[RMDB]
RNA sequence: GGGAACGACUCGAGUAGAGUCGAAAAAUAGCUGAGUCAUUAAGGCUAAUGAAUGCCCAGAGCAAAGUAGCGUUUUACUGCCUCGACUUGAACGGAAUGAGGAGAGAUACAUAUUUUAAACUGUUAAAUGAACUUAAAACUCAAGAUCUUGAGGACAAAAUCAACAUCUAUUCGUAGAUGUUGAUUUAAAAGAAACAACAACAACAAC
Reactivity to 2A3 in 0.01 (KOAc 150mM, MgCl2 10mM, bicine 150mM(pH8.5), 24C), signal-to-noise 6, nucleotides 027 to 156: a000u060a000g000c010u010g030a010g150u120c070a090u160u130a110a050g030g000c000u040a030a030u150g110a070a060u120g010c010c020c010a040g030a020g050c080a070a080a050g030u060a020g050c030g030u020u080u070u090a070c050u070g040c000c000u020c020g020a020c020u050u100g030a090a020c070g020g090a080a070u150g020a050g020g050a050g010a000g010a040u110a080c030a010u120a110u090u160u060u150a040a140a050c030u050g040u140u100a040a130a130u140g010a040a000c030u040u100a040a120a020a060c020u030c020a050a020g060a300u050c040u200u160g010a030g030g010a020c040a010
Reactivity to DMS in 0.01 (KOAc 150mM, MgCl2 10mM, bicine 150mM(pH8.5), 24C), signal-to-noise 3, nucleotides 027 to 156: a130u000a040g020c000u000g010a190g020u000c090a130u000u000a130a250g010g040c020u010a050a150u000g020a100a110u000g000c030c000c010a150g000a130g030c050a060a060a070g010u000a030g030c070g020u000u000u000u000a040c050u000g010c030c010u000c020g010a120c020u000u000g010a090a220c080g010g020a070a110u000g010a100g010g010a180g010a100g000a120u000a070c060a060u000a070u000u000u000u010a050a050a100c060u010g000u000u000a040a070a140u010g000a070a080c060u010u010a010a030a050a100c020u000c010a020a080g000a050u020c060u000u000g020a070g030g010a040c090a130
Background
Structure probing data (2A3 and DMS) for a 207-nucleotide construct. Values are in units of 0.01, from 0 to 300, in steps of 10. The reactions ran in a buffer of 150 mM KOAc, 10 mM MgCl2 and 150 mM bicine (pH 8.5), at 24 C. It was measured as part of the RMDB library OK3TST. Values cover nucleotides 27 to 156.